An RNA of 177 nucleotides, treated with DMS and 2A3 and read out base by base. 2A3 adducts were read by reverse transcription with SuperScript II with manganese. Values are in units of 0.01, from 0 to 300, in steps of 10. For DMS the reverse transcriptase was MarathonRT. High DMS reactivity at an A or C suggests that its Watson-Crick edge is free.

[RMDB]
RNA sequence: GGGAACGACUCGAGUAGAGUCGAAAAGAAAGAAAGCUGGCCUCCAGGGCUUUGUACAUGGUAGGCUUUCAUUCAUUCGUUUGCACAUUCGGUGAAGGUCUACUGUGUGCCAGGCCCUGUGCCAGAAUAUUUAGCCCCAAUUCGUUGGGGCUAAAUAAAAAGAAACAACAACAACAAC
Reactivity to DMS in 0.01 (KOAc 150mM, MgCl2 10mM, bicine 150mM(pH8.5), 24C), signal-to-noise 3, nucleotides 027 to 126: g020a120a120a100g000a120a110a070g000c010u010g010g000c000c020u000c020c000a020g010g000g000c000u000u000u000g000u000a020c000a000u000g000g010u010a000g000g000c000u000u000u000c010a000u010u050c080a080u010u010c110g020u010u020u060g000c270a060c070a070u000u010c130g000g020u000g000a020a010g000g010u000c000u010a000c010u000g030u000g010u000g000c000c050a010g000g000c010c000c010u000g000u020g000c010c010a000g000a080a040
Reactivity to 2A3 in 0.01 (KOAc 150mM, MgCl2 10mM, bicine 150mM(pH8.5), 24C), signal-to-noise 5, nucleotides 027 to 126: g120a020a090a000g100a020a080a010g080c000u000g000g000c000c010u040c010c010a000g000g000g000c010u010u010u000g010u020a000c000a000u010g020g000u000a000g010g000c020u030u000u000c000a030u130u100c020a030u040u110c070g140u070u090u300g150c140a110c040a090u100u120c120g020g010u010g000a000a000g010g010u000c000u000a000c000u010g010u000g000u000g020c000c000a000g000g000c020c000c000u000g000u000g000c000c000a000g000a000a000